[RMDB]
RNA sequence: GGGAACGACUCGAGUAGAGUCGAAAAUGGAGAGGGGAAGUCCUGAGCUGACCAAGCCUCCAAGAGCCAUUCCGGAACUAGAGAUCUUAAAUACUACAUGGUAAUUAUCCCCUCUGCCUCUGCCCAUGAGGGUGUCAGGCACAGGGCCGCCUGGCUGUAUUCACCCACUAUUCGUAGUGGGUGAAUAAAAAGAAACAACAACAACAAC
Reactivity to 2A3 in 0.01 (KOAc 150mM, MgCl2 10mM, bicine 150mM(pH8.5), 24C), signal-to-noise 3, nucleotides 027 to 156: u070g030g020a010g010a040g010g010g000g010a070a010g040u020c010c040u050g000a020g000c040u030g040a130c000c060a060a020g020c000c000u020c030c010a060a030g060a010g070c000c000a020u130u020c030c050g080g010a090a050c060u090a040g020a000g010a180u050c020u080u290a110a080a070u120a110c070u060a040c030a070u100g050g000u090a100a110u110u120a050u080c000c020c000c010u010c010u070g180c020c020u070c070u060g050c000c000c000a020u130g050a140g000g040g000u050g010u000c020a010g020g000c020a010c050a090g000g030g020c000c000g010c000c000u020g000g040c010u020g030
Reactivity to DMS in 0.01 (KOAc 150mM, MgCl2 10mM, bicine 150mM(pH8.5), 24C), signal-to-noise 2, nucleotides 027 to 156: u000g020g000a140g000a020g000g010g010g000a120a120g010u000c010c030u000g000a170g060c050u000g000a150c100c110a060a300g000c060c020u000c030c040a080a130g020a120g030c030c020a160u010u000c040c070g000g010a070a070c040u000a080g010a130g000a060u010c050u000u000a040a110a130u000a060c030u000a100c070a100u000g000g000u010a060a110u000u000a150u000c010c000c000c000u000c020u000g000c010c020u000c060u010g030c030c020c000a180u000g010a200g050g000g010u000g020u010c000a000g000g010c000a080c040a090g000g000g000c080c070g010c000c000u010g000g030c010u000g010
Chemical mapping of a 207-nucleotide RNA with 2A3 and DMS. Reactivities are given for positions 27 through 156. For 2A3, 1,452 sequencing reads were counted. For 2A3 the reverse transcriptase was SuperScript II with manganese. Reactivities are rounded to 0.1 and cut off at 0 and 3.